[RMDB]
RNA sequence: GGGAACGACUCGAGUAGAGUCGAAAAGAUAUGGAACGAGAACUACAAUGCACCGUAAUGAGAGCGACUGGUCGGAAACGACCAGAGAACGCUCUCAUUACGGUGACCCAUUGCUCGUUCCUAAGUCCAGUAUUCGGAUGUUCGCAUCCGAAUACUGAAAAGAAACAACAACAACAAC
Reactivity to DMS in 0.01 (KOAc 150mM, MgCl2 10mM, bicine 150mM(pH8.5), 24C), signal-to-noise 1, nucleotides 027 to 126: g010a070u000a300u000g000g030a020a030c010g000a020g010a160a070c150u020a300c030a050a030u010g000c020a000c000c000g010u000a000a000u000g000a020g000a010g040c020g040a160c010u000g000g000u000c000g000g020a090a130a250c000g010a000c000c030a000g000a030g000a110a190c020g000c000u000c000u020c000a020u010u000a000c000g000g000u000g000a000c200c290c120a080u000u000g010c000u000c000g000u000u010c000c000u040a020a130g000u000c030
An RNA of 177 nucleotides, treated with DMS and read out base by base. DMS (dimethyl sulfate) methylates the pairing face of unpaired adenines and cytosines. It was measured as part of the RMDB library TTRINS.